[RMDB]
RNA sequence: GGGAACGACUCGAGUAGAGUCGAAAAGAUAUGGAGUAGAUGCUGAGGCGUUUGACGAGCGUCGGAAACGACGCUCCGAGCUACCCACCAGCUCUACUCCUAAGUCAAAGGCUGGUUCGCCAGCCAACCCUAAGGUAUGGUUCGCCAUACCUUAGGGAAAAGAAACAACAACAACAAC
Reactivity to 2A3 in 0.01 (KOAc 150mM, MgCl2 10mM, bicine 150mM(pH8.5), 24C), signal-to-noise 3, nucleotides 027 to 126: g040a020u080a050u170g000g000a000g010u010a000g000a080u300g020c000u000g020a050g100g090c150g070u140u230u220g060a060c030g010a000g020c010g010u000c020g010g000a030a060a020c010g000a010c010g010c000u000c010c000g010a020g000c020u060a140c030c020c020a120c080c010a030g000c010u000c000u000a000c000u000c000c000u010a030a020g010u000c030a100a050a080g010g010c000u010g060g000u070u130c270g060c110c000a000g000c000c000a000a050
Reactivity to DMS in 0.01 (KOAc 150mM, MgCl2 10mM, bicine 150mM(pH8.5), 24C), signal-to-noise 5, nucleotides 027 to 126: g000a050u000a300u010g010g010a030g040u000a010g010a030u000g020c000u010g000a080g010g000c300g020u010u000u010g010a180c300g010a020g010c000g020u000c000g000g010a120a070a180c000g010a010c010g040c000u000c000c000g000a140g010c060u000a040c070c040c060a300c060c010a010g000c000u000c010u000a000c010u000c000c000u000a010a030g000u000c050a110a100a140g010g010c000u010g000g000u000u020c240g000c000c000a020g010c010c010a020a040